Annotation: Conditions: 150 mM KOAc, 10 mM MgCl2 and 150 mM bicine (pH 8.5), 24 C. An RNA of 177 nucleotides, treated with DMS and 2A3 and read out base by base. Values are in units of 0.01, from 0 to 300, in steps of 10. For DMS the reverse transcriptase was MarathonRT. Values cover nucleotides 27 to 126. It was measured as part of the RMDB library RFM100. For 2A3 the reverse transcriptase was SuperScript II with manganese.
[RMDB]
RNA sequence: GGGAACGACUCGAGUAGAGUCGAAAACCGACAGGACACGCUCAGCCCCUGACACGCUCGGCUCUGCGCGCCUGAGACCAGCACCGAGAGGAGACAGCGGUGAGCGCGGCAAAGGCCACUCGGCGCGCCGAGCACGCUCUUUCGAGAGCGUGCUCGGAAAAGAAACAACAACAACAAC
Reactivity to DMS in 0.01 (KOAc 150mM, MgCl2 10mM, bicine 150mM(pH8.5), 24C), signal-to-noise 1, nucleotides 027 to 126: c000c050g040a000c070a040g000g030a060c100a060c000g000c020u000c050a170g010c040c000c010c010u010g000a210c180a080c050g070c020u000c030g000g010c000u000c000u050g000c000g000c060g000c000c000u000g050a050g050a080c000c110a150g010c000a090c010c000g010a070g000a160g000g080a180g000a090c010a020g000c060g000g030u000g020a160g110c030g010c190g090g000c040a080a250a090g000g080c110c050a090c050u020c100g000g060c000g000c010g000
Reactivity to 2A3 in 0.01 (KOAc 150mM, MgCl2 10mM, bicine 150mM(pH8.5), 24C), signal-to-noise 3, nucleotides 027 to 126: c010c000g030a050c050a050g020g070a020c010a010c060g000c000u040c040a030g110c000c000c000c000u050g040a040c020a000c070g040c020u060c000g000g010c000u000c030u060g020c010g000c010g010c000c020u040g020a040g040a080c020c040a010g050c010a020c000c030g070a050g000a030g070g060a100g070a080c050a040g030c020g020g010u060g040a060g000c090g000c030g080g000c050a110a140a070g060g020c040c010a030c020u040c040g000g020c000g000c010g000